The record gives the reactivity of an RNA of 177 nucleotides to 2A3 and DMS. The DMS profile rests on 1,586 reads. The 2A3 profile rests on 1,738 reads.
RNA sequence: GGGAACGACUCGAGUAGAGUCGAAAAAAGGUGCUUUACUGCCAGGCCAAGGAUCGUGGGCUCUACGUCUGCGCCGCGCGCAACUCGGCGGGCCAGACGCUCAGUGCCGUGCAGCUGCACGUGAAAGGUGAUAUCUGCGAUUCGUCGCAGAUAUCACAAAAGAAACAACAACAACAAC
Reactivity to 2A3 in 0.01 (KOAc 150mM, MgCl2 10mM, bicine 150mM(pH8.5), 24C), signal-to-noise 2, nucleotides 027 to 126: a030a030g220g000u050g020c030u130u130u140a050c030u020g000c010c030a050g030g020c050c020a070a050g300g010a060u040c040g020u060g000g030g000c000u000c030u050a030c010g010u010c000u010g080c070g000c120c090g100c010g000c000g000c020a060a300c020u060c130g090g000c000g020g040g000c000c000a060g050a120c010g000c020u030c050a040g020u080g100c000c000g000u040g000c000a030g040c000u040g000c000a010c040g090u110g070a170a070a010g170
Reactivity to DMS in 0.01 (KOAc 150mM, MgCl2 10mM, bicine 150mM(pH8.5), 24C), signal-to-noise 2, nucleotides 027 to 126: a110a070g000g010u000g010c010u000u000u010a120c050u010g010c050c060a080g050g000c030c060a170a130g000g020a010u000c050g050u000g000g000g000c030u000c040u000a100c060g010u000c040u000g000c110g000c010c140g030c160g010c030g040c060a060a080c150u020c010g000g020c110g010g010g000c000c000a040g000a040c000g000c140u010c070a060g000u010g010c050c030g000u010g020c000a060g010c150u000g000c020a020c010g000u000g000a030a080a080g000
The RNA was probed in 150 mM KOAc, 10 mM MgCl2 and 150 mM bicine (pH 8.5) at 24 C.